[RMDB]
RNA sequence: GGGAACGACUCGAGUAGAGUCGAAAACUCAGUUCGCUGAGACAUAGACCUUUGUGCGUAGGUUGCACUAACAGAGAACAUGAUCCCCAUUGGGGCGUAUGUUCGACGAAGUUAGUGCACUCCUACGCACUCUGGUACCUUUUGAGUUCGCUCAAAAGUAUAUAACACGGUUCGCCGUGUUAUAUACAAAAGAAACAACAACAACAAC
Reactivity to 2A3 in 0.01 (KOAc 150mM, MgCl2 10mM, bicine 150mM(pH8.5), 24C), signal-to-noise 8, nucleotides 027 to 156: c000u000c000a010g030u090u110c230g030c130u000g020a010g040a050c090a110u230a040g150a060c000c000u000u010u010g000u000g000c000g010u000a010g000g010u010u010g000c000a000c000u000a000a000c010a010g050a000g000a050a000c000a000u030g040a110u120c000c050c010c040a220u250u300g010g000g000g000c030g060u210a000u010g000u000u010c020g080a050c040g060a130a030g000u000u000a000g000u000g010c000a000c010u000c000c010u000a000c000g000c000a000c000u000c000u000g000g000u070a090c000c010u030u030u020u020g020a020g030u080u180c280g060c120u020c030a020a020a000a020
Reactivity to DMS in 0.01 (KOAc 150mM, MgCl2 10mM, bicine 150mM(pH8.5), 24C), signal-to-noise 3, nucleotides 027 to 156: c010u000c000a030g020u000u000c120g000c010u000g010a140g020a180c120a120u000a100g010a080c000c010u000u000u000g010u000g010c020g040u000a010g010g020u000u000g000c000a020c000u000a020a020c000a120g000a300g000a020a020c010a020u010g010a130u000c010c000c000c020a300u000u000g020g010g020g010c110g000u000a020u000g010u000u000c000g020a280c160g020a110a180g000u000u010a010g040u000g010c010a010c060u000c010c000u000a020c000g000c000a000c000u000c010u010g020g010u000a020c060c030u000u000u000u000g000a030g030u000u000c160g010c040u010c020a040a030a070a160

The data come from the RNA Mapping Database (RMDB), library RNAMAK. An RNA of 207 nucleotides, treated with 2A3 and DMS and read out base by base. The reactions ran in a buffer of 150 mM KOAc, 10 mM MgCl2 and 150 mM bicine (pH 8.5), at 24 C.